[RMDB]
RNA sequence: GGGAACGACUCGAGUAGAGUCGAAAAUAAAAUAGCGUAAUGGACAUUGGGAGUGUACGCUAAGUGUGUGUUGUAUACCUAACGUGCAAUUGAACACACACACAGUUGCACCUAAUGUCCAAAAAAACGAUAUGUCUGGAUUCGUCCAGACAUAUCGAAAAGAAACAACAACAACAAC
Reactivity to DMS in 0.01 (KOAc 150mM, MgCl2 10mM, bicine 150mM(pH8.5), 24C), signal-to-noise 2, nucleotides 027 to 126: u020a060a050a060a070u030a130g010c110g000u020a080a120u000g000g020a020c000a040u000u000g000g000g010a070g010u000g040u000a020c170g010c040u030a100a200g020u000g050u000g000u000g030u000u010g020u000a120u010a100c060c030u010a090a170c300g000u000g020c050a030a080u000u000g010a060a020c040a030c010a020c000a010c010a050c210a020g000u000u000g040c030a030c010c010u000a000a020u000g020u000c010c010a000a000a050a040a030a010a040